An RNA of 170 nucleotides, treated with 2A3 and DMS and read out base by base.
For 2A3, 21,220 sequencing reads were counted.
Source: RMDB library 15KLIB, as collected in RNAgym.
RNA sequence: GGGAACGACUCGAGUAGAGUCGAAAACGAGGGGACCGUCCCUCGGUAAUGGCGAAUGGGACCCAGAACUCUCUCUAGAUUCCCAGAGUGAAUCGAGAGAAAACUGGCUCUCCCUUAGCCAUCCGAGACAGCGUGAACUUCGGUUCACGCAAAAGAAACAACAACAACAAC
Reactivity to 2A3 in 0.01 (KOAc 150mM, MgCl2 10mM, bicine 150mM(pH8.5), 24C), signal-to-noise 6, nucleotides 027 to 129: c020g010a030g000g010g010g030a030c030c030g180u190c040c020c000u000c000g000g000u030a040a010u010g000g000c020g020a030a050u050g000g010g010a020c030c000c000a010g030a060a040c040u000c000u020c000u000c020u070a070g000a020u010u010c000c020c110a060g040a020g060u300g030a010a000u000c000g000a000g000a000g000a010a050a010a010c000u000g000g000c000u000c000u000c000c010c000u000u000a000g000c000c000a000u000c000c000g010a010g020a030c050a040
Reactivity to DMS in 0.01 (KOAc 150mM, MgCl2 10mM, bicine 150mM(pH8.5), 24C), signal-to-noise 4, nucleotides 027 to 129: c040g000a060g050g000g060g030a140c180c090g090u110c120c080c010u010c030g030g000u030a000a000u030g010g040c030g020a100a070u010g110g000g000a050c070c010c000a000g010a100a230c160u010c010u010c010u020c030u030a110g030a030u000u000c010c030c250a150g000a100g030u000g030a050a000u000c020g000a000g020a050g060a010a000a020a080c010u000g000g060c040u030c120u020c030c000c040u000u000a240g020c000c030a040u090c030c000g020a060g040a120c150a160